[RMDB]
RNA sequence: GGGAACGACUCGAGUAGAGUCGAAAAGACGGAAAAGAUCGAACCUAAGAAGAUCAGGAAGUGUGAGCCGAAUCCUAGGGCUCCUAGGGACGCAUCGUCCGAUGCGAAAUAAACACUAACGUCGAAAACCUAUAAUCCAUUUCGAUGGAUUAUAGGUAAAAGAAACAACAACAACAAC
Reactivity to 2A3 in 0.01 (KOAc 150mM, MgCl2 10mM, bicine 150mM(pH8.5), 24C), signal-to-noise 9, nucleotides 027 to 126: g010a000c010g040g030a060a050a070a050g010a030u050c030g030a100a110c020c020u070a110a060g080a060a010g000a070u030c020a030g100g110a080a050g020u030g010u060g040a020g080c060c040g070a060a080u050c010c010u030a040g020g040g090c030u050c040c000u050a040g010g000g020a010c010g000c000a010u010c010g290u150c120c210g000a010u010g000c000g040a060a040a080u140a020a080a000c010a000c020u070a100a010c000g000u000c000g020a060a050a020
Reactivity to DMS in 0.01 (KOAc 150mM, MgCl2 10mM, bicine 150mM(pH8.5), 24C), signal-to-noise 9, nucleotides 027 to 126: g000a020c020g000g010a100a070a100a080g020a010u000c000g010a130a150c130c130u030a120a110g020a140a150g000a010u000c010a090g000g030a120a060g020u000g010u000g000a070g010c060c050g010a110a090u010c010c000u010a050g010g010g020c080u020c020c130u020a040g000g010g010a290c030g000c010a010u000c000g000u060c220c190g000a010u000g000c010g000a050a070a080u030a070a100a050c020a010c030u010a090a130c040g000u010c010g000a090a070a090
Conditions: 150 mM KOAc, 10 mM MgCl2 and 150 mM bicine (pH 8.5), 24 C. An RNA of 177 nucleotides, treated with 2A3 and DMS and read out base by base. For 2A3, 26,915 sequencing reads were counted. DMS adducts were read by reverse transcription with MarathonRT. 2A3 adducts were read by reverse transcription with SuperScript II with manganese. The data come from the RNA Mapping Database (RMDB), library OK1LIB. The DMS profile rests on 32,764 reads.